[RMDB]
RNA sequence: GGGAACGACUCGAGUAGAGUCGAAAACUUAUAAUCUGCCUACUAUGUGUGACAUCAAACAAAUGUUGUUCUGCAUGGAAGUUGUAAACAAGUACUUCGAAAUCUAUGACGGUGGUUGUCUUAAUGCGUAACAGCCUCUUCGGAGGCUGUAAAAGAAACAACAACAACAAC
Reactivity to DMS in 0.01 (KOAc 150mM, MgCl2 10mM, bicine 150mM(pH8.5), 24C), signal-to-noise 5, nucleotides 027 to 129: c060u060u000a080u090a010a050u040c110u060g000c080c010u040a130c010u060a040u010g040u030g000u030g030a060c040a030u020c000a000a000a000c280a130a200a220u020g000u030u020g000u060u010c020u040g000c020a020u010g020g050a120a110g000u060u000g000u030a040a000a110c170a050a070g050u040a080c050u030u010c040g020a040a050a060u010c050u020a030u040g000a300c300g020g000u000g000g080u000u020g020u020c030u030u040a000a000u040g010c170g040u030a090
Reactivity to 2A3 in 0.01 (KOAc 150mM, MgCl2 10mM, bicine 150mM(pH8.5), 24C), signal-to-noise 4, nucleotides 027 to 129: c010u020u010a010u070a210a110u080c040u030g010c000c010u060a070c000u000a020u050g000u000g030u060g060a000c000a020u020c010a040a080a240c040a030a220a040u130g000u000u000g020u080u020c000u000g000c000a020u010g000g010a050a030g010u020u040g080u150a030a020a030c010a040a030g030u000a070c000u040u000c000g040a060a110a150u000c020u000a230u060g040a020c020g020g000u030g000g020u040u040g120u020c000u020u160a140a070u170g030c020g000u000a050
The record gives the reactivity of an RNA of 170 nucleotides to DMS and 2A3.
Values cover nucleotides 27 to 129.
The DMS profile rests on 10,197 reads.
It was measured as part of the RMDB library 15KLIB.
2A3 adducts were read by reverse transcription with SuperScript II with manganese.